[RMDB]
RNA sequence: GGGAACGACUCGAGUAGAGUCGAAAACAGGAAACUGGUUAAUCGUUUUCCUUGGUAGUAUAGCGGAAACCAUAAAUAAGAAUAACUCUAAGUGCUUGAGUAGAGUUAAAAUAAUUAGACAGGCAAUUAAGGUACUCCACGUUCGCGUGGAGUACAAUCGUAGAACGAAGUUCGCUUCGUUCUACGAAAAAGAAACAACAACAACAAC
Reactivity to DMS in 0.01 (KOAc 150mM, MgCl2 10mM, bicine 150mM(pH8.5), 24C), signal-to-noise 2, nucleotides 027 to 156: c040a070g000g010a070a110a050c040u000g030g030u020u010a120a180u010c010g020u010u010u000u000c000c030u010u000g040g060u010a110g040u000a130u010a140g010c050g010g000a090a040a090c040c030a080u000a030a040a090u000a070a090g010a250a230u010a050a010c010u000c010u010a050a080g030u000g000c060u000u010g020a140g000u000a070g000a060g000u000u000a010a060a050a080u010a040a060u020u000a040g000a280c060a010g040g010c010a060a100u020u000a070a140g000g000u000a030c010u000c000c010a010c000g050u000u000c280g050c040g150u000g010g010a020g010u010a000c010a040a010
Reactivity to 2A3 in 0.01 (KOAc 150mM, MgCl2 10mM, bicine 150mM(pH8.5), 24C), signal-to-noise 6, nucleotides 027 to 156: c050a020g050g070a050a030a050c050u110g050g040u130u140a110a080u160c030g010u010u020u070u090c020c010u040u050g120g000u030a080g000u050a080u100a150g050c050g010g060a060a060a020c030c010a060u110a170a110a050u100a090a050g070a110a070u080a090a010c000u010c000u000a010a020g030u040g220c010u010u000g000a010g010u010a000g010a010g020u120u130a010a020a000a000u090a000a020u160u010a000g000a010c010a010g000g000c010a010a020u110u150a140a060g060g000u000a000c000u000c000c000a010c010g010u040u040c170g020c010g090u000g000g000a000g000u000a000c000a000a000